Notes:
The record gives the reactivity of an RNA of 207 nucleotides to 2A3. 2A3 is a SHAPE reagent: it acylates the 2'-hydroxyl of flexible nucleotides of all four kinds. It was measured as part of the RMDB library RNAMAK. Reactivities are given for positions 27 through 156.
[RMDB]
RNA sequence: GGGAACGACUCGAGUAGAGUCGAAAAGGGGUCGGAUUGAUGACCGUGCGAUUAGAGCUAUGAAGUACCUGAAGCCUCCACGGGUAUGGAGCUCUGCACGCAAGAUCCGACGGAGGCACCCAAAACGUAUCAUCCGACUUCGGUCGGAUGAUACGAAGCUAUUUGUCGUCUUCGGACGACAAAUAGCAAAAGAAACAACAACAACAAC
Reactivity to 2A3 in 0.01 (KOAc 150mM, MgCl2 10mM, bicine 150mM(pH8.5), 24C), signal-to-noise 1, nucleotides 027 to 156: g110g000g080g000u040c000g020g000a000u030u010g050a040u050g010a070c000c010g000u000g020c050g080a230u140u300a250g000a030g020c030u070a300u300g000a000a000g020u000a000c000c030u000g000a100a000g010c010c000u000c000c000a000c000g000g030g000u000a010u010g000g000a010g000c000u000c000u010g010c000a000c000g000c010a000a030g000a010u000c000c000g000a010c020g000g000a020g000g020c020a040c020c000c020a020a030a010a010c030g010u000a000u020c000a000u020c000c000g020a000c010u010u010c300g120g000u000c000g000g010a000u000g000a000u000a010c010g000a000a010